This 177-nucleotide RNA was probed chemically with 2A3 and DMS. It was measured as part of the RMDB library RFMREP. The RNA was probed in 150 mM KOAc, 10 mM MgCl2 and 150 mM bicine (pH 8.5) at 24 C. For DMS the reverse transcriptase was MarathonRT. For DMS, 851 sequencing reads were counted.
RNA sequence: GGGAACGACUCGAGUAGAGUCGAAAACAAUCUCAACAUUUGUUUAAUUUAACAACUCAAACACUGAAGAAAGUCAAAGGACUGUACUACUUUGUAGGUGUAGCAGUCGCCCAGUGGGAAAGCGUCAGUCAUUCCUUUAGUUCGCUAAAGGAAUGACAAAAGAAACAACAACAACAAC
Reactivity to 2A3 in 0.01 (KOAc 150mM, MgCl2 10mM, bicine 150mM(pH8.5), 24C), signal-to-noise 2, nucleotides 027 to 126: c010a030a070u020c020u010c040a010a070c020a090u020u080u030g040u000u050u060a210a180u160u080u130a080a050c020a000a030c000u060c070a100a050a040c020a030c070u050g030a050a010g060a140a140a000g070u090c100a140a060a000g050g000a000c000u010g000u030a040c000u030a000c000u130u230u230g070u180a050g030g080u070g020u080a010g050c000a010g010u010c000g030c010c000c000a010g030u110g010g000g020a030a110a000g080c000g160u050c020a040
Reactivity to DMS in 0.01 (KOAc 150mM, MgCl2 10mM, bicine 150mM(pH8.5), 24C), signal-to-noise 1, nucleotides 027 to 126: c120a120a200u000c030u000c050a110a290c170a060u030u000u000g000u000u010u000a110a110u010u000u000a100a040c120a030a080c130u040c060a020a060a020c030a020c060u000g010a040a080g020a030a130a110g000u000c110a010a030a030g010g000a000c010u000g020u000a050c020u000a000c000u050u000u010g010u010a050g020g000u000g020u000a080g000c030a000g020u000c010g020c060c020c000a040g030u000g020g030g000a120a070a070g000c090g010u000c150a160